[RMDB]
RNA sequence: GGGAACGACUCGAGUAGAGUCGAAAACAGGACCCCCAAAAGGAGGGGGGUGGGCCUUGGACCUCCAGGAGCCAUGGGAUCCGUGGAGUACCCGGGAUAUCCCUUCUCCACACUCCUUCCCCCCUGCAACCUUGUUCGUUCGCGAACAAGAAAAGAAACAACAACAACAAC
Reactivity to 2A3 in 0.01 (KOAc 150mM, MgCl2 10mM, bicine 150mM(pH8.5), 24C), signal-to-noise 9, nucleotides 027 to 129: c060a020g090g090a070c000c000c000c000c000a040a070a050a030g040g000a020g010g010g010g010g000g010u050g030g050g020c010c010u030u110g020g010a070c010c020u110c020c020a010g010g010a030g030c040c030a110u190g070g000g020a030u020c030c040g130u100g010g000a040g030u150a160c010c020c010g010g000g000a110u120a110u210c010c010c000u080u040c010u000c000c010a050c010a030c030u000c000c000u010u070c000c000c000c010c000c010u020g030c020a020a060c010
Reactivity to DMS in 0.01 (KOAc 150mM, MgCl2 10mM, bicine 150mM(pH8.5), 24C), signal-to-noise 5, nucleotides 027 to 129: c090a090g010g000a220c070c010c010c010c040a080a040a070a060g050g030a040g010g000g000g000g000g010u020g020g000g040c050c030u000u060g000g000a200c220c140u070c010c040a020g000g000a020g030c000c000a090u060g010g010g010a040u000c040c010g030u040g010g010a110g020u050a090c060c050c070g000g000g000a140u010a090u030c000c010c020u050u030c000u030c020c010a080c070a170c070u020c010c030u010u080c040c000c010c010c020c020u000g030c090a060a090c150